RNA sequence: GGGAACGACUCGAGUAGAGUCGAAAAGAUAUGGAUGUAGGGAGAAUCCGGUUCGGAAACGAACCGAACAUUCAUCGAUCUACUGUCCUAAGUCAAAGAUAGAACGGCGUUCGCGCCGUUCUAUCAAGGUAUAGUAUGGCUUCGGCCAUACUAUACCAAAAGAAACAACAACAACAAC
Reactivity to DMS in 0.01 (KOAc 150mM, MgCl2 10mM, bicine 150mM(pH8.5), 24C), signal-to-noise 3, nucleotides 027 to 126: g000a010u000a150u010g000g000a040u000g010u000a010g020g010g020a250g010a070a130u000c110c010g000g020u000u000c010g030g000a030a010a110c000g000a000a010c000c020g010a050a050c200a030u010u000c160a140u000c060g010a240u000c000u000a000c020u010g030u000c000c000u000a020a150g000u000c040a080a110a140g000a030u000a000g000a010a010c000g030g010c000g000u010u020c210g030c000g000c000c000g010u000u000c000u000a010u000c010a030a030
Reactivity to 2A3 in 0.01 (KOAc 150mM, MgCl2 10mM, bicine 150mM(pH8.5), 24C), signal-to-noise 2, nucleotides 027 to 126: g020a020u000a010u080g000g000a000u010g010u010a010g020g010g030a060g060a070a030u040c050c030g000g000u020u000c000g010g010a020a020a030c000g000a000a000c000c030g000a020a010c010a040u180u300c070a120u200c030g040a020u000c000u010a010c120u190g110u030c000c000u030a070a000g070u020c040a190a020a100g000a010u000a000g000a000a010c000g010g000c010g050u090u100c260g010c000g050c070c000g000u010u000c000u000a000u010c000a000a000